An RNA of 177 nucleotides, treated with 2A3 and DMS and read out base by base. The reactions ran in a buffer of 150 mM KOAc, 10 mM MgCl2 and 150 mM bicine (pH 8.5), at 24 C. The DMS profile rests on 6,001 reads.

[RMDB]
RNA sequence: GGGAACGACUCGAGUAGAGUCGAAAAGGUCUACGUCAAGAGCAUGGAAAAUUGCCACUGUUGCCACAGGAUCAACAGCAGAGAUGAGAGAACCGAAGGCAAAGGAUUCCGAAAAGCUUAGGCUAAAUGACAUCUCUUUAUUCGUAAAGAGAUGUCAAAAAGAAACAACAACAACAAC
Reactivity to 2A3 in 0.01 (KOAc 150mM, MgCl2 10mM, bicine 150mM(pH8.5), 24C), signal-to-noise 3, nucleotides 027 to 126: g020g000u050c010u050a040c060g040u020c040a100a070g030a030g060c030a050u080g100g000a030a040a060a090u080u070g000c020c000a040c050u050g050u060u040g030c030c020a090c040a150g060g000a100u060c020a030a080c010a030g060c040a000g060a000g000a150u120g030a060g000a010g020a130a020c020c030g000a060a020g000g000c000a010a010a000g070g010a080u050u050c020c010g060a080a100a010a040g000c040u070u050a060g030g050c020u040a030a040a090
Reactivity to DMS in 0.01 (KOAc 150mM, MgCl2 10mM, bicine 150mM(pH8.5), 24C), signal-to-noise 6, nucleotides 027 to 126: g020g020u000c020u000a050c120g010u000c050a080a080g010a120g030c020a050u010g010g000a100a030a070a110u000u010g010c020c050a180c050u000g010u000u010g000c070c050a240c140a160g010g010a080u010c030a020a080c090a060g000c070a050g010a090g010a060u010g010a120g010a080g000a070a070c030c020g010a090a100g000g000c050a040a050a110g000g000a160u000u010c010c030g010a060a070a090a080g000c020u010u010a080g010g010c020u000a030a110a100